RNA sequence: GGGAACGACUCGAGUAGAGUCGAAAAUAUUGUGGGCAUAAAGACUAUGGAUGUAAAACCCCUGCUCAACUACUUUGAGCCCUUGUUUACCUGGCUGAAAGAGCAGAACAGGAAUUCAUUCGUGGGACUUACGGACAUCCUUCGGGAUGUCCGUAAGAAAAGAAACAACAACAACAAC
Reactivity to DMS in 0.01 (KOAc 150mM, MgCl2 10mM, bicine 150mM(pH8.5), 24C), signal-to-noise 2, nucleotides 027 to 126: u080a100u000u000g010u020g000g020g070c070a050u030a120a020a040g000a100c000u000a010u000g010g000a050u010g000u030a000a110a160a140c300c000c070c000u000g000c000u000c020a100a180c070u050a100c020u000u000u000g030a030g010c020c040c300u020u060g000u020u020u000a170c190c030u030g000g040c000u000g000a000a060a070g000a030g000c220a130g040a020a040c070a010g000g000a110a110u000u010c000a000u000u040c000g000u000g030g000g020a080
Reactivity to 2A3 in 0.01 (KOAc 150mM, MgCl2 10mM, bicine 150mM(pH8.5), 24C), signal-to-noise 2, nucleotides 027 to 126: u210a070u050u160g000u040g030g090g000c010a010u030a070a160a040g050a050c000u020a000u020g020g000a020u030g090u300a000a010a040a080c040c000c040c000u010g000c000u000c040a170a030c060u200a010c070u060u030u240g060a000g010c010c000c000u080u030g150u030u130u170a230c060c020u120g020g000c000u030g010a060a090a010g030a020g060c060a010g010a030a010c010a000g000g040a000a110u110u010c000a000u020u010c010g000u010g000g030g000a000
About this RNA
Structure probing data (DMS and 2A3) for a 177-nucleotide construct. Reactivities are given for positions 27 through 126. For DMS the reverse transcriptase was MarathonRT. The RNA was probed in 150 mM KOAc, 10 mM MgCl2 and 150 mM bicine (pH 8.5) at 24 C. For DMS, 1,559 sequencing reads were counted.